Annotation
Chemical mapping of a 177-nucleotide RNA with 2A3 and DMS. The DMS profile rests on 2,307 reads. DMS adducts were read by reverse transcription with MarathonRT. For 2A3, 2,130 sequencing reads were counted.

RNA sequence: GGGAACGACUCGAGUAGAGUCGAAAAAAAAAAAGAUAUGGACUAACGAUGAAAUAUGCUGGCGUUGAUCUAGCUUCGGAAACGAAGCUAGGGAGCCACAUAUGGAGUUAGUCCUAAGUCAAAAAAACUACCAUUAUAACUUCGGUUAUAAUGGUAGAAAAGAAACAACAACAACAAC
Reactivity to 2A3 in 0.01 (KOAc 150mM, MgCl2 10mM, bicine 150mM(pH8.5), 24C), signal-to-noise 1, nucleotides 027 to 126: a000a010a010a000a010a010a050g110a050u240a050u140g000g000a010c010u020a000a000c020g260a300u180g030a020a110a000u060a010u060g190c300u040g000g040c040g240u300u030g000a000u030c010u010a020g010c000u000u000c000g030g000a030a040a050c030g010a010a010g020c000u000a000g000g020g010a020g000c000c020a000c000a000u000a000u000g030g000a040g020u010u000a000g000u050c000c000u000a000a010g030u020c010a000a020a030a060a000a060a190
Reactivity to DMS in 0.01 (KOAc 150mM, MgCl2 10mM, bicine 150mM(pH8.5), 24C), signal-to-noise 2, nucleotides 027 to 126: a000a000a060a080a060a120a110g000a010u000a300u010g000g000a020c010u000a010a020c000g030a170u010g020a120a100a020u000a000u010g030c230u010g000g000c000g020u010u020g030a010u020c010u030a000g000c010u000u000c010g000g010a130a110a090c010g010a000a000g000c000u000a000g000g010g000a020g000c000c000a000c010a010u000a000u000g020g000a110g010u010u010a000g000u000c010c000u000a020a050g000u000c000a000a010a140a100a090a120a160